[RMDB]
Notes:
An RNA of 177 nucleotides, treated with DMS and 2A3 and read out base by base. The DMS profile rests on 7,729 reads. The 2A3 profile rests on 15,469 reads. For DMS the reverse transcriptase was MarathonRT. Reactivities are rounded to 0.1 and cut off at 0 and 3. The RNA was probed in 150 mM KOAc, 10 mM MgCl2 and 150 mM bicine (pH 8.5) at 24 C. The data come from the RNA Mapping Database (RMDB), library TTRDEL.
RNA sequence: GGGAACGACUCGAGUAGAGUCGAAAAGAUAUGGAUAUAUGGACAUGCUAUUAUGGUCGGAAACGACCAGAAUAGCAACAGCCCGCUAUAUCCUAAGUCAAAACUUCAUAUCUUCGGAUAUGAAGAACUAUCUAUAUCGGUUCGCCGAUAUAGAUAGAAAAGAAACAACAACAACAAC
Reactivity to DMS in 0.01 (KOAc 150mM, MgCl2 10mM, bicine 150mM(pH8.5), 24C), signal-to-noise 6, nucleotides 027 to 126: g000a030u000a300u010g000g000a010u000a000u000a010u010g000g010a010c040a300u000g010c000u000a000u000u000a030u000g000g000u000c000g000g000a080a080a180c010g000a020c000c000a000g000a010a010u000a010g010c010a030a050c230a140g000c000c000c000g000c240u000a000u000a000u000c000c010u000a050a130g010u000c030a110a070a070a160c010u000u000c000a000u000a000u000c000u000u010c250g020g000a010u000a000u000g000a000a000g010a040a190
Reactivity to 2A3 in 0.01 (KOAc 150mM, MgCl2 10mM, bicine 150mM(pH8.5), 24C), signal-to-noise 4, nucleotides 027 to 126: g030a030u070a040u130g000g000a000u010a000u000a010u110g020g000a030c040a100u120g000c010u010a000u020u010a040u030g000g000u010c010g040g000a060a080a090c010g010a000c000c000a000g000a010a000u010a000g010c000a020a010c010a010g040c010c000c000g000c020u000a000u000a000u000c000c000u010a160a010g050u020c030a020a010a140a200c010u000u010c000a000u000a000u010c010u050u080c300g150g000a000u010a000u010g000a000a000g000a010a020